The record gives the reactivity of an RNA of 177 nucleotides to 2A3 and DMS.
The reactions ran in a buffer of 150 mM KOAc, 10 mM MgCl2 and 150 mM bicine (pH 8.5), at 24 C.
For 2A3 the reverse transcriptase was SuperScript II with manganese.
RNA sequence: GGGAACGACUCGAGUAGAGUCGAAAACGACGUGAGGGCACUUCGCGGGCAGUGCUGCGGCCUCGUGUGGGAUCGCGUCAGGACUGAAGGAGAGCGAAUCCCGGGGCUCGGUGUGGAGAAGGAGGUGUGUAGUUGAACAAUUCGUUGUUCAACUACAAAAAGAAACAACAACAACAAC
Reactivity to 2A3 in 0.01 (KOAc 150mM, MgCl2 10mM, bicine 150mM(pH8.5), 24C), signal-to-noise 6, nucleotides 027 to 126: c030g070a000c010g040u050g050a080g010g020g010c020a020c070u040u010c040g010c030g020g040g000c010a020g020u060g060c020u040g010c020g040g000c010c000u060c030g060u150g020u150g070g010g000a030u040c010g000c020g080u040c020a030g030g120a050c070u100g060a080a050g080g050a060g010a010g010c020g000a010a060u050c000c010c000g000g010g000g000c020u030c030g000g020u040g030u090g040g030a060g000a080a030g030g030a020g020g010u040g010
Reactivity to DMS in 0.01 (KOAc 150mM, MgCl2 10mM, bicine 150mM(pH8.5), 24C), signal-to-noise 5, nucleotides 027 to 126: c070g000a080c070g020u010g000a080g000g010g000c060a060c050u010u010c060g010c060g020g000g000c060a050g010u000g000c050u000g010c070g000g010c020c010u010c030g030u040g020u030g020g000g000a060u000c020g010c000g010u020c040a090g030g000a120c070u010g020a130a080g020g000a120g000a130g000c020g010a070a090u000c010c010c000g020g000g000g010c030u010c050g010g010u010g020u000g010g000a070g010a120a080g000g000a070g000g010u010g020